Overview
This 207-nucleotide RNA was probed chemically with DMS and 2A3. Conditions: 150 mM KOAc, 10 mM MgCl2 and 150 mM bicine (pH 8.5), 24 C. The 2A3 profile rests on 7,935 reads. DMS (dimethyl sulfate) methylates the pairing face of unpaired adenines and cytosines. For DMS the reverse transcriptase was MarathonRT. It was measured as part of the RMDB library PDB130.
RNA sequence: GGGAACGACUCGAGUAGAGUCGAAAAGACAUCCUUUCGAGGAUGUCAAAAGGGUGGCUCUACAUUUGUUGCGGGUUCGAGACCCGUCAGAGCGAAAGCUCUGUAGCUCAAUGGUAGAGCGGUGUAGUCACCAAAUGUAAGAUAUUCGUAUCUUACAAUACAUGAUUCUGUUCGCAGAAUCAUGUAUAAAAGAAACAACAACAACAAC
Reactivity to DMS in 0.01 (KOAc 150mM, MgCl2 10mM, bicine 150mM(pH8.5), 24C), signal-to-noise 6, nucleotides 027 to 156: g000a020c000a010u000c000c010u000u000u010c300g030a030g020g010a010u000g010u000c010a010a010a090a080g010g020g030u000g020g010c010u010c030u000a050c040a080u000u000u000g040u000u000g010c000g000g010g030u010u000c030g000a300g000a030c000c000c000g030u000c010a030g000a060g000c000g010a180a060a270g020c000u000c010u000g020u000a030g020c010u000c020a030a040u010g020g020u000a050g000a020g090c000g000g010u000g000u000a050g020u000c020a020c010c000a040a060a120u000g030u000a000a000g010a020u000a050u000u010c290g030u000a030u000c010u000u010a000c000a150
Reactivity to 2A3 in 0.01 (KOAc 150mM, MgCl2 10mM, bicine 150mM(pH8.5), 24C), signal-to-noise 6, nucleotides 027 to 156: g000a000c000a010u000c000c000u060u060u150c230g100a030g000g000a000u000g010u010c010a060a030a010a020g070g000g000u030g010g000c040u030c050u110a020c010a030u050u060u230g060u040u010g000c000g010g000g000u010u020c010g000a010g020a040c000c000c010g000u000c000a000g000a000g000c020g050a080a040a010g000c000u000c000u000g000u000a000g010c000u000c010a030a030u220g300g040u210a050g000a000g000c000g000g000u000g000u000a020g000u020c010a000c000c000a070a090a010u070g000u000a000a000g020a010u000a020u040u150c210g020u040a000u040c000u000u000a000c000a000